[RMDB]
RNA sequence: GGGAACGACUCGAGUAGAGUCGAAAAGAACACCGCUGGCGAAGGCGGGUCCAUGCGAAACACGUGACGAACAGGAACGAAAGCGGGCGUAGCAAACAGCAUUAGAUACGCUAGUGGUCCACGCCGAAAAUUAAUAGAAAUUCGUUUCUAUUAAUUUAAAAGAAACAACAACAACAAC
Reactivity to DMS in 0.01 (KOAc 150mM, MgCl2 10mM, bicine 150mM(pH8.5), 24C), signal-to-noise 9, nucleotides 027 to 126: g000a110a110c100a090c010c020g020c020u010g000g000c050g020a110a090g000g010c030g010g000g020u000c030c040a060u010g010c040g000a110a100a090c140a090c030g010u020g000a170c070g010a120a080c120a110g000g000a110a050c040g000a030a080a180g000c030g000g000g000c010g000u010a090g010c050a070a070a080c130a080g000c060a100u020u020a090g000a160u010a070c080g000c010u000a060g020u010g000g010u000c030c030a070c030g000c020c010g010a060
Reactivity to 2A3 in 0.01 (KOAc 150mM, MgCl2 10mM, bicine 150mM(pH8.5), 24C), signal-to-noise 5, nucleotides 027 to 126: g010a040a000c040a010c010c000g000c030u030g050g010c040g040a060a010g030g010c010g020g010g000u000c010c010a030u060g000c020g040a060a020a000c040a000c050g010u030g030a040c010g010a080a030c040a070g020g040a030a020c010g010a070a040a010g020c020g010g000g000c020g010u020a010g030c020a040a080a040c060a030g040c000a030u050u090a070g060a100u070a070c050g010c030u050a060g050u020g050g000u020c030c030a130c080g060c000c010g040a040
The record gives the reactivity of an RNA of 177 nucleotides to DMS and 2A3. It was measured as part of the RMDB library OK1LIB. For 2A3, 8,439 sequencing reads were counted.